[RMDB]
RNA sequence: GGGAACGACUCGAGUAGAGUCGAAAAUCCAUCCUUUUCCUUCUUUCCGAGAAUUCCUUUGAUGUUUCCCAGCCAGGGAUUGUCCUCCUCAAGUUUCUUGAUUUUCUUCUUAACCUUCCGGAGGUUUCUCUCGAGUUCCUCUAACUGCUUUCUUCCAGGUAUCUAACUAGUUCGCUAGUUAGAUACCAAAAGAAACAACAACAACAAC
Reactivity to 2A3 in 0.01 (KOAc 150mM, MgCl2 10mM, bicine 150mM(pH8.5), 24C), signal-to-noise 1, nucleotides 027 to 156: u030c020c000a050u060c010c000u070u110u070u190c030c000u030u050c050u050u130u040c050c040g040a030g030a080a070u060u110c050c000u080u170u180g050a040u070g060u010u080u030c000c000c000a030g050c030c050a060g000g040g000a040u020u070g000u000c010c030u050c010c010u070c070a100a080g030u030u140u080c040u090u030g020a110u120u090u070u000c050u080u010c000u030u030a040a040c000c020u050u090c050c040g150g000a030g020g000u000u080u020c030u010c010u010c000g010a050g010u020u010c020c050u020c030u030a160a080c070u040g040c040u020u040u010c000u060u000c050c030a050